The record gives the reactivity of an RNA of 207 nucleotides to 2A3 and DMS. The DMS profile rests on 2,475 reads. Source: RMDB library M2RFPK, as collected in RNAgym. Values are in units of 0.01, from 0 to 300, in steps of 10. 2A3 adducts were read by reverse transcription with SuperScript II with manganese.
RNA sequence: GGGAACGACUCGAGUAGAGUCGAAAAGAAAUUACGUUUCCUUUACACUUCUCAAACCGGGAUCAAGAGAAGCAAAGCAUCCCUCAUAUCCGCGAUGGAGGGUGUCGUGGAGUAUACUGUACCAAAAAGAGCGAACACGGCUUCGGCCGUGUUCGAAGCUAUGUUAGAAGUUCGCUUCUAACAUAGCAAAAGAAACAACAACAACAAC
Reactivity to 2A3 in 0.01 (KOAc 150mM, MgCl2 10mM, bicine 150mM(pH8.5), 24C), signal-to-noise 5, nucleotides 027 to 156: g050a000a070a010u200u110a040c040g020u000u030u030c020c000u050u050u050a050c060a020c010u080u040c010u010c050a170a160a140c080c050g060g010g020a070u070c050a220a050g010a020g020a030a020g060c070a050a020a020g030c010a040u040c010c020c000u040c020a060u100a050u100c040c030g020c050g040a010u060g050g060a030g020g040g000u040g010u010c020g010u010g010g010a020g040u020a030u010a070c090u090g070u110a080c010c070a040a030a030a030a040g100a030g020c010g010a000a000c010a000c000g000g000c010u070u060c190g060g000c000c000g000u000g000u000u000c000g000a000a000
Reactivity to DMS in 0.01 (KOAc 150mM, MgCl2 10mM, bicine 150mM(pH8.5), 24C), signal-to-noise 1, nucleotides 027 to 156: g000a050a070a090u000u000a100c110g010u010u000u000c010c030u000u000u000a090c080a050c010u000u000c030u000c000a040a140a120c080c080g000g070g030a110u000c060a120a280g020a080g020a060a040g020c010a070a110a220g000c050a070u000c020c010c000u000c050a060u000a070u000c080c100g040c080g020a150u000g030g020a030g000g000g000u010g010u000c080g060u010g000g010a130g020u000a100u010a050c110u010g000u000a150c040c060a000a040a140a080a090g020a110g000c010g020a020a000c010a000c000g010g030c020u000u000c300g000g060c000c000g000u010g000u000u000c000g030a000a080